Structure probing data (2A3 and DMS) for a 207-nucleotide construct. Reactivities are given for positions 27 through 156. For DMS the reverse transcriptase was MarathonRT.

[RMDB]
RNA sequence: GGGAACGACUCGAGUAGAGUCGAAAACAUUACGGAUUCAGUCGCAAAUUGUAGAAUUAGCUACUCUACGAUUUAGUGAGCGUUAGUAACGUUGUAAUAUAAUAUAGUCUUUGGAAGGAUUAUAUUGGAGCCGCGGACAAGUUCGCUUGUCCGCGAACUAUAUCAAACGGUUCGCCGUUUGAUAUAGAAAAGAAACAACAACAACAAC
Reactivity to 2A3 in 0.01 (KOAc 150mM, MgCl2 10mM, bicine 150mM(pH8.5), 24C), signal-to-noise 5, nucleotides 027 to 156: c020a060u130u170a060c080g100g020a070u130u140c070a050g120u020c030g000c010a000a000a010u010u000g000u010a000g020a030a030u080u030a050g040c020u070a020c010u000c000u000a000c000g010a010u000u000u110a070g000u010g040a060g030c020g040u050u070a060g020u090a110a050c050g000u010u000g020u040a110a120u090a110u010a140a000u000a010u010a020g000u000c030u080u110u160g160g040a130a070g030g000a010u000u000a000u010a000u010u020g040g060a060g090c070c010g000c010g000g000a000c000a010a000g010u040u130c160g060c110u010u000g000u000c020c000g010c000g000a000a000
Reactivity to DMS in 0.01 (KOAc 150mM, MgCl2 10mM, bicine 150mM(pH8.5), 24C), signal-to-noise 2, nucleotides 027 to 156: c060a100u000u000a040c010g010g020a100u000u000c070a110g040u000c020g010c020a040a010a050u000u010g000u000a030g000a030a070u000u000a300g020c190u000a130c110u000c010u010a010c010g010a040u000u010u000a070g030u020g010a080g030c080g030u000u010a050g000u000a030a020c070g010u010u000g010u000a060a120u000a070u000a020a020u000a050u000a000g030u000c000u000u010u010g010g010a240a210g000g000a010u000u000a020u000a010u000u000g020g010a100g040c110c010g030c020g040g000a040c000a010a010g030u010u010c300g010c020u000u010g000u010c020c000g020c000g010a000a030
For 2A3 the reverse transcriptase was SuperScript II with manganese. The RNA was probed in 150 mM KOAc, 10 mM MgCl2 and 150 mM bicine (pH 8.5) at 24 C. In probing experiments dimethyl sulfate is read out at A N1 and C N3, which are open when not base-paired.